An RNA of 207 nucleotides, treated with DMS and 2A3 and read out base by base. For DMS, 2,487 sequencing reads were counted. The data come from the RNA Mapping Database (RMDB), library OK3TST. Conditions: 150 mM KOAc, 10 mM MgCl2 and 150 mM bicine (pH 8.5), 24 C. Reactivities are given for positions 27 through 156.
RNA sequence: GGGAACGACUCGAGUAGAGUCGAAAAGAAGAAAUAGUCUAAGCUGCUGCCUUAUGGACAAGUAAGAGGAAAUGGGAAGUGGGAGGCAAAAGUUGGAACAUGGAGAGAACAGAGCAUACUUGAGGACCAUCAGAAUGGCCUUUGCAGUGUAUAUGUGAACACGAAAGGUGUUCGCACCUUUCGUGUUAAAAGAAACAACAACAACAAC
Reactivity to DMS in 0.01 (KOAc 150mM, MgCl2 10mM, bicine 150mM(pH8.5), 24C), signal-to-noise 2, nucleotides 027 to 156: g040a140a070g020a080a070a120u000a100g040u000c030u000a080a160g000c000u010g020c010u020g040c030c020u010u000a090u000g010g030a140c060a060a110g010u010a060a050g010a080g000g010a040a110a070u000g010g000g020a080a060g010u000g000g030g000a040g000g050c040a050a040a030a130g000u000u000g000g020a060a080c070a080u000g000g000a060g010a070g010a060a070c050a100g000a060g040c060a110u010a040c050u000u000g010a130g060g010a030c030c030a060u000c070a080g010a130a170u000g000g010c010c010u030u020u000g010c010a030g030u000g010u000a110u020a080u020g020u010g000
Reactivity to 2A3 in 0.01 (KOAc 150mM, MgCl2 10mM, bicine 150mM(pH8.5), 24C), signal-to-noise 4, nucleotides 027 to 156: g040a040a010g040a010a070a060u130a040g040u040c050u120a040a020g010c020u060g040c030u040g000c050c000u120u140a110u110g010g030a030c030a050a030g060u080a110a020g020a010g020g030a060a030a060u150g020g010g020a050a000g030u080g020g010g030a020g020g000c000a060a020a010a030g040u070u090g030g010a040a010c020a110u080g020g000a010g010a000g000a070a000c030a020g030a010g070c010a020u060a110c020u030u060g020a010g060g030a050c000c000a020u080c010a020g140a180a060u050g020g030c000c000u020u030u090g010c030a040g060u030g070u060a050u040a040u300g050u050g110